[RMDB]
RNA sequence: GGGAACGACUCGAGUAGAGUCGAAAAAAAAUUUGUGAUAACACAAGUUAUGCCUGUUAGCUCUGGAACCAUGUCAGAGAUGAUGCAAGAAACUUGGAACCUCUGUCAACAGCAGAUAACAGAAGGAACAUCAGUCCAAAUGCUUUAUGCAUUUCAACACAGCAUGGAAGUUCGCUUCCAUGCUGUGAAAAGAAACAACAACAACAAC
Reactivity to 2A3 in 0.01 (KOAc 150mM, MgCl2 10mM, bicine 150mM(pH8.5), 24C), signal-to-noise 2, nucleotides 027 to 156: a000a010a000a010u150u060u030g030u070g080a170u220a300a020c030a000c010a020a030g000u060u000a050u120g090c010c020u010g020u030u040a020g040c020u000c010u010g030g040a050a050c060c020a170u070g050u030c010a000g000a010g020a050u030g020a030u080g010c100a070a070g010a200a150a090c040u020u030g050g000a060a050c000c000u000c020u000g020u040c050a090a060c020a060g070c020a030g000a060u080a100a000c030a010g120a140a070g080g000a000a010c040a140u150c050a050g080u060c030c030a000a100a000u020g000c000u050u130u110a040u230g020c030a010u050u080u030c030a020a050
Reactivity to DMS in 0.01 (KOAc 150mM, MgCl2 10mM, bicine 150mM(pH8.5), 24C), signal-to-noise 1, nucleotides 027 to 156: a020a030a050a000u040u020u000g000u010g000a300u000a130a210c000a020c000a070a090g000u000u000a020u000g050c050c000u020g020u020u000a070g000c010u000c020u040g000g000a090a070c110c040a120u010g020u000c040a080g000a090g020a110u010g000a060u000g000c060a070a230g000a100a030a060c060u010u000g030g000a140a210c050c000u010c000u000g020u020c010a030a060c030a070g000c040a040g000a060u000a060a070c010a060g000a020a100g000g020a070a060c000a100u000c070a130g000u000c030c050a080a040a030u010g010c010u000u020u010a030u020g020c020a070u000u000u000c060a010a190

This 207-nucleotide RNA was probed chemically with 2A3 and DMS. Conditions: 150 mM KOAc, 10 mM MgCl2 and 150 mM bicine (pH 8.5), 24 C. The data come from the RNA Mapping Database (RMDB), library OK3TST. The DMS profile rests on 1,826 reads.